[RMDB]
RNA sequence: GGGAACGACUCGAGUAGAGUCGAAAAAACAGCACCAACUCGGUUUCCAGGUCUGCUACAGAAAUGAGAUUGGCACGUACAAGGCCAUUUCUGAUGGCCUCAGAAAUCCACGGAUAAUCUCUUGGUGCCCUCUUAGCAUUUUCGAAUGCUAAGAGGGAAAAGAAACAACAACAACAAC
Reactivity to 2A3 in 0.01 (KOAc 150mM, MgCl2 10mM, bicine 150mM(pH8.5), 24C), signal-to-noise 9, nucleotides 027 to 126: a000a000c070a020g020c010a010c000c010a030a050c040u040c080g050g000u020u020u000c010c010a020g020g030u000c030u050g050c060u100a050c020a020g090a030a070a040u170g020a120g040a140u050u080g050g010c100a040c200g110u300a050c050a070a040g100g060c010c010a000u000u040u020c040u070g050a080u020g010g000c000c000u030c020a030g080a040a060a010u070c040c020a040c080g040g000a030u060a150a070u040c020u000c000u040u040g020g010u050g020
Reactivity to DMS in 0.01 (KOAc 150mM, MgCl2 10mM, bicine 150mM(pH8.5), 24C), signal-to-noise 4, nucleotides 027 to 126: a030a040c110a070g000c010a010c000c030a050a000c080u010c190g000g000u000u010u010c000c230a090g000g010u010c030u010g000c070u050a070c070a060g000a060a060a020u000g010a090g000a090u000u000g000g000c040a150c090g010u020a110c100a090a020g000g040c050c030a010u000u000u020c080u020g040a150u000g000g010c010c030u010c180a050g020a040a050a100u040c050c050a060c150g000g020a050u040a070a080u010c050u000c210u000u000g010g000u010g000
The record gives the reactivity of an RNA of 177 nucleotides to 2A3 and DMS. DMS adducts were read by reverse transcription with MarathonRT. 2A3 adducts were read by reverse transcription with SuperScript II with manganese. The data come from the RNA Mapping Database (RMDB), library OK1LIB. Conditions: 150 mM KOAc, 10 mM MgCl2 and 150 mM bicine (pH 8.5), 24 C.